Conditions: 150 mM KOAc, 10 mM MgCl2 and 150 mM bicine (pH 8.5), 24 C.
This 207-nucleotide RNA was probed chemically with 2A3.
For 2A3 the reverse transcriptase was SuperScript II with manganese.
RNA sequence: GGGAACGACUCGAGUAGAGUCGAAAAGAAAGAAAGAAAGAAGCCCUGCCUGGGGGCUGCCGCAAGGCGCUAUCAGGACGUGGAUUAGUCGGGCAGUGCCACGGUUCGAGAAAAGCCCGACAGCCAAAAAACACACCCUCGUUCGCGAGGGUGUGAACUAAAACGUAACGUUCGCGUUACGUUUUAGAAAAGAAACAACAACAACAAC
Reactivity to 2A3 in 0.01 (KOAc 150mM, MgCl2 10mM, bicine 150mM(pH8.5), 24C), signal-to-noise 1, nucleotides 027 to 156: g050a010a120a000g060a060a130a020g060a060a180a080g050a100a020g000c000c000c020u010g000c000c000u010g000g080g010g000g000c010u050g010c040c000g050c050a040a020g000g000c000g000c070u020a020u240c000a000g000g000a020c020g000u010g020g000a030u090u140a120g000u000c000g000g000g000c000a040g160u080g120c010c000a000c020g030g010u130u100c070g000a000g020a110a010a000a000g000c010c030c010g000a000c000a000g020c020c010a030a110a060a060a080a000c000a000c000a010c000c000c010u020c000g000u080u070c300g000c000g090a010g000g010g010u000g000u000g000a000a000